[RMDB]
RNA sequence: GGGAACGACUCGAGUAGAGUCGAAAAGCACGUCGUUACGACGACGUGCAAGAAAACAAAAGGAGUGGCGAGCGGUGGCCACAGUGAAUCAAACACCGCAAAAGCAUGGUGGUACGCCACCAUGCAAGCAUUUAGGCAUAUUCGUAUGCCUAAAUGCAAAAGAAACAACAACAACAAC
Reactivity to 2A3 in 0.01 (KOAc 150mM, MgCl2 10mM, bicine 150mM(pH8.5), 24C), signal-to-noise 8, nucleotides 027 to 126: g010c000a000c000g010u000c000g010u020u070a110c300g030a000c000g000a000c000g090u010g000c000a000a000g000a010a100a020a010c130a020a090a060a040g270g040a190g010u010g000g010c060g040a090g020c010g020g000u000g010g010c000c010a000c010a000g070u080g070a040a040u140c050a030a010a030c000a000c000c000g000c010a000a050a000a020g000c000a000u000g000g000u010g000g020u040a020c240g070c030c000a000c000c000a000u000g000c000a010a000
Reactivity to DMS in 0.01 (KOAc 150mM, MgCl2 10mM, bicine 150mM(pH8.5), 24C), signal-to-noise 2, nucleotides 027 to 126: g000c010a040c000g010u010c000g070u010u010a130c180g060a060c020g050a000c040g000u080g010c000a020a000g000a030a130a190a110c230a100a110a110a110g000g050a080g000u000g000g000c000g000a080g000c000g000g050u000g000g080c000c000a000c000a070g030u010g020a030a130u000c220a000a000a040c000a000c000c010g000c040a090a030a060a020g000c010a000u000g000g000u000g000g000u020a030c300g040c000c030a000c000c000a000u000g020c030a020a030